This 177-nucleotide RNA was probed chemically with 2A3 and DMS.
For DMS the reverse transcriptase was MarathonRT.
Values cover nucleotides 27 to 126.
The reactions ran in a buffer of 150 mM KOAc, 10 mM MgCl2 and 150 mM bicine (pH 8.5), at 24 C.
The 2A3 profile rests on 2,221 reads.
[RMDB]
RNA sequence: GGGAACGACUCGAGUAGAGUCGAAAAGGUUUGCACUUUAAUCGUCAAUGCGCAACAGUACAUACUCUGGUAACCGCCACCGAAGCCCAUACUGUAGCUUGUCCUUCCGUACGGAUUGCCAGCAAUCGUAUGAAGGACCUUUCGAGGUCCUUCAUACAAAAGAAACAACAACAACAAC
Reactivity to 2A3 in 0.01 (KOAc 150mM, MgCl2 10mM, bicine 150mM(pH8.5), 24C), signal-to-noise 2, nucleotides 027 to 126: g070g010u070u060u100g050c040a090c040u090u070u260a120a090u140c030g080u060c090a070a090u110g020c010g000c050a030a070c010a070g020u090a040c020a080u150a040c040u040c030u110g010g000u050a030a050c010c000g040c060c040a020c010c010g020a030a010g020c000c000c000a040u070a100c060u080g050u050a030g020c030u000u050g030u060c000c000u040u020c050c010g040u040a020c010g000g080a070u010u030g000c030c010a030g000c040a040a080u140c060
Reactivity to DMS in 0.01 (KOAc 150mM, MgCl2 10mM, bicine 150mM(pH8.5), 24C), signal-to-noise 3, nucleotides 027 to 126: g020g020u010u010u010g010c050a040c050u010u000u000a060a120u020c090g000u000c090a030a060u000g000c070g030c080a040a060c090a060g000u010a060c110a110u010a060c060u000c030u000g000g000u000a050a080c070c080g000c020c040a080c060c050g000a080a100g010c030c050c030a090u010a050c080u010g010u000a090g020c020u010u020g000u000c050c040u000u000c050c060g000u010a080c110g000g000a050u000u010g000c040c030a090g000c210a070a060u010c160
For DMS, 2,333 sequencing reads were counted.